Chemical mapping of a 177-nucleotide RNA with DMS. Conditions: 150 mM KOAc, 10 mM MgCl2 and 150 mM bicine (pH 8.5), 24 C. Source: RMDB library TTRDES, as collected in RNAgym.
RNA sequence: GGGAACGACUCGAGUAGAGUCGAAAAGAUAUGGACGCAUCUAAGACUCGAUAAGCGUGAUUCGGAAACGAAUCAACGCUUUUGACGAGUCUGUGCGUCCUAAGUCAAACGGCGCUUCGGCGCCGAACAAGACCUUACCCUUCGGGGUAAGGUCUUGAAAAGAAACAACAACAACAAC
Reactivity to DMS in 0.01 (KOAc 150mM, MgCl2 10mM, bicine 150mM(pH8.5), 24C), signal-to-noise 1, nucleotides 027 to 126: g020a070u000a300u000g010g000a010c020g030c000a010u020c250u030a160a000g030a010c000u000c000g050a120u000a030a020g000c000g010u000g010a020u010u010c000g000g020a080a030a210c000g050a020a050u000c000a020a070c000g010c000u000u000u000u000g010a140c170g010a040g000u010c000u010g030u010g010c000g000u000c000c000u000a010a130g010u000c010a060a240a220c000g000g000c010g040c000u000u010c130g060g000c020g050c000c000g000a020a060